[RMDB]
RNA sequence: GGGAACGACUCGAGUAGAGUCGAAAACGCCGGUCAGCAGCGCGCCGCCGAGCCGGUGGCCGACGAGCGCAGCGCCGGCGCGUGGCUGCGCGACCUGGUGCGCGGCGACGCCGACACCAUCCGCGAGACAGACAGCUCAAUUCGUUGAGCUGUCUGUAAAAGAAACAACAACAACAAC
Reactivity to DMS in 0.01 (KOAc 150mM, MgCl2 10mM, bicine 150mM(pH8.5), 24C), signal-to-noise 2, nucleotides 027 to 126: c060g020c010c020g000g010u000c050a170g010c030a060g000c060g010c000g010c090c020g040c020c000g010a110g030c030c070g050g010u010g010g040c010c000g020a050c080g040a200g010c030g020c020a040g050c010g030c000c010g000g010c000g000c000g000u010g010g000c030u010g010c000g010c030g010a090c100c030u000g010g020u000g010c090g020c010g010g020c060g040a080c040g000c010c030g000a150c030a050c010c020a090u000c070c040g030c030g010a210g000
Reactivity to 2A3 in 0.01 (KOAc 150mM, MgCl2 10mM, bicine 150mM(pH8.5), 24C), signal-to-noise 1, nucleotides 027 to 126: c030g030c010c010g000g000u060c060a030g000c020a020g090c030g000c010g050c130c030g000c000c000g030a040g060c020c060g300g130u130g090g070c020c020g120a100c050g030a040g040c010g000c050a040g000c000g010c020c000g000g000c000g020c000g020u050g140g060c020u060g010c010g000c030g000a070c030c030u070g000g070u060g000c190g000c000g000g020c020g100a150c120g040c020c010g040a000c010a000c020c000a050u070c070c000g020c030g010a010g030
Record summary: This 177-nucleotide RNA was probed chemically with DMS and 2A3. High DMS reactivity at an A or C suggests that its Watson-Crick edge is free. It was measured as part of the RMDB library OK2TST. The reactions ran in a buffer of 150 mM KOAc, 10 mM MgCl2 and 150 mM bicine (pH 8.5), at 24 C.